[RMDB]
RNA sequence: GGGAACGACUCGAGUAGAGUCGAAAAAAGGGAAGAAACGGAAGCCUUUCCCCUUGACGCCGGUGAAACUCUGGAAUAGGAAGAAGGAAGGUGGAAAGAAAGGAGGGACCCUCCCGAUCCGAGGGGCAUAUCGGGUGGUUCGCCACCCGAAAAAGAAACAACAACAACAAC
Reactivity to DMS in 0.01 (KOAc 150mM, MgCl2 10mM, bicine 150mM(pH8.5), 24C), signal-to-noise 4, nucleotides 027 to 129: a040a020g070g000g010a080a010g010a010a020a030c210g010g030a110a110g010c040c020u050u000u000c020c000c010c110u040u040g000a150c180g030c110c030g050g040u030g020a090a050a070c060u000c030u010g000g060a090a100u030a100g000g000a050a060g020a050a060g020g000a040a020g010g050u040g040g050a080a040a100g040a040a120a100g010g050a050g030g010g000a050c030c020c090u040c000c000c000g000a040u050c080c050g000a090g000g000g000g000c240a000u020a050
Reactivity to 2A3 in 0.01 (KOAc 150mM, MgCl2 10mM, bicine 150mM(pH8.5), 24C), signal-to-noise 2, nucleotides 027 to 129: a000a000g040g000g010a070a000g050a080a050a010c080g010g040a050a000g000c030c000u000u050u000c020c000c000c000u020u060g030a020c020g040c010c050g000g020u100g000a110a030a020c030u020c020u050g010g050a040a040u030a120g040g030a000a010g030a050a000g030g020a000a020g060g100u130g020g010a010a020a000g070a030a030a000g000g000a000g000g000g000a010c000c030c000u020c010c000c010g000a010u040c000c020g000a060g000g020g020g000c020a010u060a030